Chemical mapping of a 177-nucleotide RNA with DMS and 2A3. Reactivities are given for positions 27 through 126. DMS adducts were read by reverse transcription with MarathonRT. The DMS profile rests on 1,146 reads. Conditions: 150 mM KOAc, 10 mM MgCl2 and 150 mM bicine (pH 8.5), 24 C. For 2A3, 666 sequencing reads were counted.
[RMDB]
RNA sequence: GGGAACGACUCGAGUAGAGUCGAAAAAAGCGUGGUGGUGCGCAGGCACGCAGCCGACAGGAUCGUGCAGGAUCUCUUCGAUGCCUGUUUCACCGAUCCCUCAUUGAUGCCUGAUGAAUGGCGUUUAGUACUGGAGGGGUUUCGACCCCUCCAGUACAAAAGAAACAACAACAACAAC
Reactivity to DMS in 0.01 (KOAc 150mM, MgCl2 10mM, bicine 150mM(pH8.5), 24C), signal-to-noise 2, nucleotides 027 to 126: a100a050g030c190g010u030g010g030u000g020g000u000g000c300g030c030a050g000g040c030a030c110g000c160a010g020c100c070g000a060c190a040g000g000a040u000c020g030u000g020c180a070g000g000a040u000c000u010c170u010u000c100g020a080u000g000c000c000u000g020u000u000u000c050a090c040c040g010a050u000c000c000c030u020c140a130u010u010g000a060u000g000c000c010u000g010a180u020g010a160a090u020g000g000c040g030u010u000u000a130
Reactivity to 2A3 in 0.01 (KOAc 150mM, MgCl2 10mM, bicine 150mM(pH8.5), 24C), signal-to-noise 1, nucleotides 027 to 126: a000a000g070c100g070u080g040g020u000g020g080u030g030c020g020c030a000g000g000c000a000c070g010c060a030g070c020c050g050a060c020a020g040g000a030u060c000g070u140g060c040a010g000g000a030u020c080u000c040u160u110c010g100a180u020g150c020c000u020g000u060u140u120c040a050c020c000g000a030u030c040c000c000u000c010a090u060u190g040a050u110g000c000c060u070g220a210u080g140a070a120u200g000g000c050g000u030u010u120a020